[RMDB]
RNA sequence: GGGAACGACUCGAGUAGAGUCGAAAAGCAUGCUCCGGCAUGGCAUUACAAUGGGAAAGGUUCAGAGACUAGAUGGGGGUCGGUUCUUUCCGGAUGGGAAGGGUUUAAGGUAUAGUCCGUUACAAACUGCAGUACAUUUUAGAUGUACGUCUGCUUGGACAGAUAUACUGUUCGCAGUAUAUCUGUCAAAAGAAACAACAACAACAAC
Reactivity to DMS in 0.01 (KOAc 150mM, MgCl2 10mM, bicine 150mM(pH8.5), 24C), signal-to-noise 2, nucleotides 027 to 156: g020c000a050u000g020c030u010c120c120g010g030c030a080u000g030g000c060a100u000u010a050c050a110a130u000g100g010g000a040a060a060g000g020u000u000c060a130g010a150g000a110c070u000a030g010a100u000g020g000g000g040g040u000c030g000g010u000u010c050u000u000u000c020c010g020g000a120u010g010g010g020a080a050g000g000g020u000u010u000a050a020g020g020u010a080u000a100g000u000c020c050g030u010u000a240c060a060a050a100c110u010g020c050a130g020u010a030c010a020u000u000u000u000a110g010a060u000g000u000a020c050g020u000c050u000g010c030u000u000g020
Reactivity to 2A3 in 0.01 (KOAc 150mM, MgCl2 10mM, bicine 150mM(pH8.5), 24C), signal-to-noise 4, nucleotides 027 to 156: g040c010a010u030g010c010u070c080c110g040g000c030a040u020g040g000c010a010u150u240a080c090a090a100u120g010g000g000a030a060a020g030g000u040u050c050a040g040a020g020a140c050u060a030g030a140u120g010g000g000g000g000u000c010g000g010u070u030c040u030u060u030c040c030g080g020a080u060g010g020g030a040a020g040g000g010u030u060u130a030a030g030g010u060a020u040a080g040u010c020c020g030u040u030a040c020a090a110a040c060u090g030c030a030g000u030a010c010a000u050u060u060u120a120g050a110u040g010u010a010c010g050u020c020u040g050c060u020u050g020